[RMDB]
RNA sequence: GGGAACGACUCGAGUAGAGUCGAAAAGGGGUCGUUGCGAUGAGGAGAUGACCAGGCAUCGAUCUACACUGAAGCCUCCACGGUGUAGGGAGCCUGCAUCUCCGAGCAACGACGGAGGCACCCAAAAGAAACGGAGGACUUCGGUCCUCCGUUUCAAGACUAGUAAGAUCUUCGGAUCUUACUAGUCAAAAGAAACAACAACAACAAC
Reactivity to 2A3 in 0.01 (KOAc 150mM, MgCl2 10mM, bicine 150mM(pH8.5), 24C), signal-to-noise 3, nucleotides 027 to 156: g030g020g110g020u010c000g000u010u000g000c050g110a300u220g050a070g010g010a010g000a000u020g060a130c160c070a020g010g000c040a090u300c180g010a000u010c000u000a000c000a000c000u050g030a090a020g010c010c010u000c000c000a010c000g000g010u000g000u000a000g000g000g000a000g000c000c000u010g000c000a000u010c000u010c000c000g000a000g000c000a000a000c000g000a000c000g000g010a000g000g000c000a030c010c000c010a060a110a010a030g010a000a010a000c000g020g000a000g010g000a000c010u040u080c230g010g000u000c000c000u010c000c000g000u000u000u000c000a000a000
Background
Source: RMDB library RNAMAK, as collected in RNAgym. An RNA of 207 nucleotides, treated with 2A3 and read out base by base. For 2A3 the reverse transcriptase was SuperScript II with manganese. For 2A3, 4,865 sequencing reads were counted.